Chemical mapping of a 177-nucleotide RNA with DMS and 2A3. For 2A3 the reverse transcriptase was SuperScript II with manganese.
RNA sequence: GGGAACGACUCGAGUAGAGUCGAAAAGAUAUGGAUCGGACUAUGGGAGAUCGGAGGUCGGAAACGACCUCGAUCGACGAUCAUAGGUCCGAUCCUAAGUCAAAGUACUGUAGUUCGCUACAGUACAGACGAGUCUAAAGUUCGCUUUAGACUCGUCAAAAGAAACAACAACAACAAC
Reactivity to DMS in 0.01 (KOAc 150mM, MgCl2 10mM, bicine 150mM(pH8.5), 24C), signal-to-noise 3, nucleotides 027 to 126: g000a070u000a300u020g010g010a000u000c010g010g010a090c000u000a010u000g000g000g030a050g000a010u010c000g040g050a010g000g020u010c000g020g000a110a100a270c000g010a010c000c000u000c010g020a000u010c010g000a070c300g000a050u030c000a000u000a030g010g000u010c000c000g010a000u010c000c000u000a020a100g020u010c050a090a070a150g010u010a010c010u000g000u000a010g010u010u000c300g020c010u010a010c000a010g010u000a000c000a060
Reactivity to 2A3 in 0.01 (KOAc 150mM, MgCl2 10mM, bicine 150mM(pH8.5), 24C), signal-to-noise 3, nucleotides 027 to 126: g050a020u090a010u120g020g010a000u010c000g000g000a000c010u010a010u010g040g080g040a060g030a020u090c300g260g130a070g000g020u000c030g000g020a120a040a030c010g000a000c000c000u000c010g000a010u000c000g030a040c010g030a020u010c010a010u000a030g180g190u030c010c000g010a000u020c000c000u020a010a010g000u000c040a100a030a090g000u000a000c010u000g000u020a010g020u030u070c300g020c120u000a000c000a000g000u010a000c000a000
Conditions: 150 mM KOAc, 10 mM MgCl2 and 150 mM bicine (pH 8.5), 24 C. For 2A3, 6,907 sequencing reads were counted.